[RMDB]
RNA sequence: GGGAACGACUCGAGUAGAGUCGAAAAAUGGCUGUAAUUUUCCUUGAUUGGCCAAUAAAGCAUACAAGUUGGCUUCUUGUUGCAUUGAAAUUUCUUCUCCACCAAGAGCCAAGGAUAACCCAUAAUACUCUGGUAGAAUAUUCGUAUUCUACCAGAGAAAAGAAACAACAACAACAAC
Reactivity to 2A3 in 0.01 (KOAc 150mM, MgCl2 10mM, bicine 150mM(pH8.5), 24C), signal-to-noise 4, nucleotides 027 to 126: a010u040g020g000c020u030g080u200a070a190u030u060u070u130c030c020u030u030g050a080u070u110g030g000c010c010a000a000u080a010a040a010g100c060a040u080a180c040a110a070g090u030u000g020g000c020u110u050c000u000u140g030u030u010g000c040a100u020u110g070a050a080a070u190u190u020c100u030u020c020u020c020c010a020c010c000a020a000g020a000g030c030c020a010a010g030g000a020u040a070a050c030c000c010a030u100a170a050u120a180
Reactivity to DMS in 0.01 (KOAc 150mM, MgCl2 10mM, bicine 150mM(pH8.5), 24C), signal-to-noise 5, nucleotides 027 to 126: a100u010g000g010c020u000g010u030a070a080u010u010u000u010c050c050u000u010g020a140u010u000g010g010c050c060a030a060u000a100a100a120g010c120a060u020a070c150a090a110g000u010u010g010g010c030u000u010c010u000u000g010u000u000g010c120a090u000u020g010a030a090a140u000u000u000c140u000u000c030u000c250c020a020c080c010a040a040g000a050g010c040c010a020a030g000g000a100u000a070a170c030c010c010a110u010a060a070u010a150
Structure probing data (2A3 and DMS) for a 177-nucleotide construct. The data come from the RNA Mapping Database (RMDB), library OK2TST. In probing experiments dimethyl sulfate is read out at A N1 and C N3, which are open when not base-paired. For 2A3 the reverse transcriptase was SuperScript II with manganese. For DMS, 4,582 sequencing reads were counted. The reactions ran in a buffer of 150 mM KOAc, 10 mM MgCl2 and 150 mM bicine (pH 8.5), at 24 C. Values cover nucleotides 27 to 126.